[RMDB]
RNA sequence: GGGAACGACUCGAGUAGAGUCGAAAAGUCUGUGCGUUUCCAUUUGAGUAUCCUCAAAACGGGCUUUUCAGCAUGGAACGUACAUAUUAAAUAGUAGGAGUGCAUAGUGGCCCGUAUAGCAGGCAUUGAGGCGAGGAUUGUUUCGACAAUCCUCGAAGACCUUACCAGUAUUCGUACUGGUAAGGUCAAAAGAAACAACAACAACAAC
Reactivity to DMS in 0.01 (KOAc 150mM, MgCl2 10mM, bicine 150mM(pH8.5), 24C), signal-to-noise 2, nucleotides 027 to 156: g020u000c060u010g030u000g020c050g030u010u000u000c010c010a130u000u010u010g010a080g010u010a050u010c040c060u020c000a080a050a130a130c160g010g010g010c020u000u000u010u000c060a230g000c110a040u000g000g010a070a080c030g010u010a070c040a080u000a070u010u000a040a070a210u000a140g010u000a050g000g010a170g020u000g070c040a140u010a130g020u000g030g020c000c020c020g060u000a050u000a090g000c040a020g050g010c040a140u000u000g010a090g020g000c000g010a030g030g010a030u000u010g020u000u010u000c300g020a080c000a010a010u000c000c010u000c010g010a030a070
Reactivity to 2A3 in 0.01 (KOAc 150mM, MgCl2 10mM, bicine 150mM(pH8.5), 24C), signal-to-noise 3, nucleotides 027 to 156: g030u030c070u030g030u000g050c010g020u010u090u100c010c010a030u080u020u040g030a030g040u090a110u110c020c010u030c010a010a010a020a050c040g000g000g030c030u080u030u060u110c060a030g000c020a010u050g020g020a040a010c010g040u000a000c000a000u050a010u020u150a050a090a080u170a030g070u030a050g010g070a030g020u030g000c060a060u080a140g090u050g070g010c020c000c000g020u020a000u060a060g030c050a010g040g000c040a040u040u100g030a030g020g080c010g000a010g000g000a000u000u000g000u000u030u020c050g030a000c000a000a000u000c000c000u010c000g000a020a000
Source: RMDB library M2RFPK, as collected in RNAgym. Structure probing data (DMS and 2A3) for a 207-nucleotide construct. For 2A3, 2,607 sequencing reads were counted. For DMS, 4,572 sequencing reads were counted. 2A3 adducts were read by reverse transcription with SuperScript II with manganese.